Chemical mapping of a 207-nucleotide RNA with 2A3.
The reactions ran in a buffer of 150 mM KOAc, 10 mM MgCl2 and 150 mM bicine (pH 8.5), at 24 C.
It was measured as part of the RMDB library OK3TST.
For 2A3, 655 sequencing reads were counted.
RNA sequence: GGGAACGACUCGAGUAGAGUCGAAAAAGCGGCAGUGUGUGCUUGCGUGUGGAGUAUAGUUAACUGGUAAUACGACUCACUAAAGGAGGUACACACCAUGAUGUACUUAAUGCCAUUACUCAUCGUCAUUGUAGGAUGCCUUGCGCUCCACUGUAGCCCAUUUCUGAUGCUUCGGCAUCAGAAAUGGAAAAGAAACAACAACAACAAC
Reactivity to 2A3 in 0.01 (KOAc 150mM, MgCl2 10mM, bicine 150mM(pH8.5), 24C), signal-to-noise 2, nucleotides 027 to 156: a040g100c040g020g040c030a070g000u010g000u030g000u020g060c000u050u120g030c020g000u070g020u070g000g020a040g010u020a060u090a050g100u200u030a230a140c040u090g140g000u060a030a060u050a010c020g040a020c010u000c010a000c000u040a000a000a140g050g020a020g000g060u000a000c000a000c000a000c060c020a060u280g060a120u030g000u010a040c000u070u140a050a130u140g030c020c010a050u040u050a050c010u030c050a130u030c100g090u000c010a100u010u160g020u060a020g000g130a070u160g060c000c040u100u120g050c060g020c010u000c000c000a020c040u030g050u050a020g010c000